[RMDB]
RNA sequence: GGGAACGACUCGAGUAGAGUCGAAAAGAUAUGGACGACGUGAGAGCAACAGCUACCCACUCGGAAACGAGUGGUGUAGACAUGCUCUGACGUCGUCCUAAGUCAAACAGUCUGUUCGCAGACUGAACCAUAUAACCGUGUUCGCACGGUUAUAUGGAAAAGAAACAACAACAACAAC
Reactivity to DMS in 0.01 (KOAc 150mM, MgCl2 10mM, bicine 150mM(pH8.5), 24C), signal-to-noise 7, nucleotides 027 to 126: g000a050u010a300u010g010g000a020c000g010a020c000g020u000g000a020g020a010g000c010a040a090c300a200g010c010u010a000c000c000c000a000c010u000c000g000g010a120a100a220c010g010a020g030u000g000g010u020g010u000a000g000a040c100a270u000g010c000u000c000u000g000a000c000g000u000c000g010u000c000c000u000a000a090g010u000c050a140a140a300c020a010g000u000c000u000g010u000u000c230g020c000a020g000a010c000u000g010a090a240
Reactivity to 2A3 in 0.01 (KOAc 150mM, MgCl2 10mM, bicine 150mM(pH8.5), 24C), signal-to-noise 4, nucleotides 027 to 126: g010a010u060a040u190g000g000a000c010g000a000c020g010u090g240a010g010a000g000c030a020a150c060a140g060c010u000a000c000c000c000a000c000u000c020g010g030a050a090a060c010g010a000g000u000g010g000u080g000u010a010g010a000c000a010u080g000c000u000c000u000g000a000c000g000u000c000g000u000c000c000u000a010a000g000u010c000a020a030a060c010a000g000u000c000u050g110u120u180c300g000c120a000g010a000c010u000g010a030a050